Conditions: 150 mM KOAc, 10 mM MgCl2 and 150 mM bicine (pH 8.5), 24 C. Structure probing data (DMS) for a 177-nucleotide construct. It was measured as part of the RMDB library OK2TST. Reactivities are given for positions 27 through 126. The DMS profile rests on 989 reads.
[RMDB]
RNA sequence: GGGAACGACUCGAGUAGAGUCGAAAAUUCACUGGUUUGGGUUCAUGAAAUGUAUUUCUUGUCUAGAAAUAAUUUUUAAUAGGUCUGUAUUUAGGUAAGAUCUAAGUGUGUACCUCCUGCUGAUAAAACGUGUAGAUCAGUUCGCUGAUCUACACGUAAAAGAAACAACAACAACAAC
Reactivity to DMS in 0.01 (KOAc 150mM, MgCl2 10mM, bicine 150mM(pH8.5), 24C), signal-to-noise 1, nucleotides 027 to 126: u010u000c010a080c060u000g000g010u000u030u000g020g020g010u010u000c080a080u010g010a030a010a030u000g020u000a010u000u000u000c000u000u000g000u030c170u010a050g000a040a040a040u000a030a020u000u000u000u000u000a100a230u010a030g010g000u000c010u000g010u000a100u000u000u020a100g030g020u000a060a050g000a040u000c010u000a030a100g010u010g000u010g010u000a030c030c020u000c030c020u000g000c120u010g010a080u000a090a060a070